[RMDB]
RNA sequence: GGGAACGACUCGAGUAGAGUCGAAAAGAGGACGGCGGCCAGGGCGCGGAGAGCUUGCCGGCGCUCCGCCACCGCCGCUACCUCCUUCCGCGUGCUGGCGAGCUCCGGCGCCGCACUAGGCACUGUUCUAUGAUCACUGUUUCGACAGUGAUCAUAGAAAAGAAACAACAACAACAAC
Reactivity to DMS in 0.01 (KOAc 150mM, MgCl2 10mM, bicine 150mM(pH8.5), 24C), signal-to-noise 1, nucleotides 027 to 126: g030a020g000g020a080c030g000g000c010g000g090c220c100a100g020g050g000c260g000c000g050g000a080g000a060g030c030u000u000g000c070c030g000g050c040g000c040u000c050c060g020c060c050a160c010c000g040c000c000g040c020u000a010c000c000u000c000c030u020u000c000c040g000c080g000u020g000c010u020g020g020c030g000a040g000c000u000c050c030g000g000c040g000c000c010g020c080a020c000u000a080g020g010c030a100c000u000g040u000u000
Reactivity to 2A3 in 0.01 (KOAc 150mM, MgCl2 10mM, bicine 150mM(pH8.5), 24C), signal-to-noise 4, nucleotides 027 to 126: g030a010g020g010a110c080g010g020c020g020g010c080c070a140g040g030g010c100g020c010g020g030a060g000a000g030c040u110u140g090c050c030g010g000c000g000c010u010c010c000g000c010c000a020c000c010g000c000c000g000c000u020a030c000c000u000c000c000u050u030c010c000g040c030g020u020g000c070u150g010g000c020g020a040g010c030u030c030c020g070g010c010g010c010c000g000c010a040c060u050a070g050g000c030a020c070u050g060u050u000